[RMDB]
RNA sequence: GGGAACGACUCGAGUAGAGUCGAAAACUUCAACAUCAUGUUCAGGCCUGCGACGACAGACAUGAUAGACGAAAACGCGCAGCUGAUCGGCGUGCCUGCCGGCACAUGCACACAGGCUCCGGCAGCCCACGGAACUAGGAUUCGUCCUAGUUCCGUGAAAAGAAACAACAACAACAAC
Reactivity to DMS in 0.01 (KOAc 150mM, MgCl2 10mM, bicine 150mM(pH8.5), 24C), signal-to-noise 3, nucleotides 027 to 126: c120u000u040c050a100a170c070a010u000c040a010u010g010u000u000c070a140g000g000c050c020u000g010c110g010a090c070g020a110c110a100g020a030c040a040u000g000a020u000a060g020a090c190g020a050a030a110a100c120g020c050g000c060a080g000c050u000g020a040u010c040g000g010c150g010u010g000c110c010u000g000c050c050g050g000c210a040c090a070u000g030c050a090c070a110c150a100g010g030c030u000c020c000g020g000c020a040g000c100c070
Reactivity to 2A3 in 0.01 (KOAc 150mM, MgCl2 10mM, bicine 150mM(pH8.5), 24C), signal-to-noise 2, nucleotides 027 to 126: c040u130u120c020a040a050c000a090u060c010a030u060g030u090u080c050a030g080g080c000c020u050g060c060g150a170c040g050a040c120a060g040a000c010a030u060g000a030u080a070g060a040c130g050a020a090a100a020c060g000c010g010c060a060g000c020u050g010a210u070c060g060g010c040g010u040g030c000c010u050g030c060c000g040g000c040a060c030a140u180g030c020a020c020a000c010a080g030g000c010u000c000c000g000g000c000a010g040c000c000